[RMDB]
RNA sequence: GGGAACGACUCGAGUAGAGUCGAAAACCCCCGGGAAACCUACUCGAGCGAGGCGGAGAUCGAGCGCCACUACGUGCGCGGCGACCUGAAGUUGCUUCGGCUUCUUCUUGUUCGCUUCAUGCGUGGACGAUUGAUAUUACUUCGGUAAUAUCAAUCGAAAAGAAACAACAACAACAAC
Reactivity to DMS in 0.01 (KOAc 150mM, MgCl2 10mM, bicine 150mM(pH8.5), 24C), signal-to-noise 3, nucleotides 027 to 126: c030c000c010c030c020g010g010g000a130a100a040c070c010u000a040c010u000c010g020a060g000c020g000a090g010g020c020g010g000a090g020a080u000c090g030a090g010c040g020c030c020a230c040u010a040c050g020u000g000c090g000c090g000g000c000g000a030c020c000u000g000a020a010g000u000u000g000c010u000u000c180g030g020c000u000u000c010u000u000c000u000u000g000u000u000c000g010c000u000u000c040a030u000g000c010g010u000g000g010a260
Reactivity to 2A3 in 0.01 (KOAc 150mM, MgCl2 10mM, bicine 150mM(pH8.5), 24C), signal-to-noise 2, nucleotides 027 to 126: c020c000c000c020c010g070g020g040a100a080a040c000c010u020a030c010u040c030g020a050g030c040g010a030g010g000c020g040g030a120g010a140u110c110g040a030g100c000g010c020c010a060c000u070a000c010g040u040g000c020g000c000g030g010c010g000a010c000c010u000g000a010a000g000u010u030g000c020u030u040c200g110g010c000u000u010c020u010u000c000u010u050g040u140u030c010g010c000u010u030c020a010u080g000c010g010u010g020g030a020